Structure probing data (DMS and 2A3) for a 177-nucleotide construct.
2A3 adducts were read by reverse transcription with SuperScript II with manganese.
RNA sequence: GGGAACGACUCGAGUAGAGUCGAAAACGCUUCUUGUACCACCAACUGUUUGGCUCCAUUGGCCAAGGUUAUCAACGAUGCUUUCGGUAUUGAAGAAGGUUUGAUGACCACUGUCCACUCUUUGACAUGAUUACCUCCCGUUCGCGGGAGGUAAUCAAAAAGAAACAACAACAACAAC
Reactivity to DMS in 0.01 (KOAc 150mM, MgCl2 10mM, bicine 150mM(pH8.5), 24C), signal-to-noise 2, nucleotides 027 to 126: c110g020c040u000u010c040u000u000g030u010a070c030c010a130c100c050a030a100c080u000g000u010u010u000g000g020c020u020c100c140a190u000u020g000g020c050c010a070a060g030g000u000u000a050u020c070a070a040c260g020a080u010g000c050u000u020u000c060g010g000u000a120u010u010g000a030a030g010a080a080g000g010u010u000u000g020a060u000g030a070c010c010a160c140u000g000u000c000c070a080c160u000c050u010u000u000g040a130c110a120
Reactivity to 2A3 in 0.01 (KOAc 150mM, MgCl2 10mM, bicine 150mM(pH8.5), 24C), signal-to-noise 1, nucleotides 027 to 126: c040g000c000u030u000c020u040u050g050u030a030c000c020a040c020c000a100a050c020u110g090u180u130u090g000g000c030u010c120c040a220u080u210g030g010c020c000a020a020g010g010u020u000a040u030c000a000a040c060g100a080u170g080c010u000u070u130c090g020g060u150a090u050u190g110a060a050g000a010a010g030g000u010u030u070g080a080u030g030a040c000c000a040c110u010g040u030c010c040a090c040u060c030u090u070u140g080a100c100a160